[RMDB]
RNA sequence: GGGAACGACUCGAGUAGAGUCGAAAAAAAAUGAGUGCGUGGUAGCACAAACCAGACCAAUCUUCGCCACAUGGUCGCACAAGUACAGCUUCGCCUGUACAAAGCGAACAACAACAACAACAAGCAAUCAUCCGGAAAUAUUCGUAUUUCCGGAUGAAAAAGAAACAACAACAACAAC
Reactivity to DMS in 0.01 (KOAc 150mM, MgCl2 10mM, bicine 150mM(pH8.5), 24C), signal-to-noise 2, nucleotides 027 to 126: a040a040a050a040u000g030a220g040u000g000c050g020u010g040g030u000a150g010c030a050c030a040a110a120c070c040a100g010a090c050c050a060a070u000c070u000u000c080g000c010c030a030c160a120u000g020g000u000c010g010c030a070c120a080a180g000u000a000c000a020g000c030u000u000c300g000c190c000u000g010u000a010c010a030a080a080g010c010g000a030a040c030a010a050c020a020a050c030a040a030c020a000a040c070a090a100g010c170a070a120
Reactivity to 2A3 in 0.01 (KOAc 150mM, MgCl2 10mM, bicine 150mM(pH8.5), 24C), signal-to-noise 1, nucleotides 027 to 126: a000a000a000a000u190g000a020g070u010g000c020g000u090g030g060u130a070g010c010a000c020a070a010a000c050c010a010g060a030c000c000a010a070u050c070u140u110c060g040c030c010a050c030a120u110g030g020u040c010g010c010a070c010a200a030g000u000a000c000a000g020c060u170u150c120g020c020c040u010g000u000a020c020a000a060a030g000c000g020a000a000c040a000a000c020a040a000c010a020a000c000a040a000c000a020a020g080c040a000a140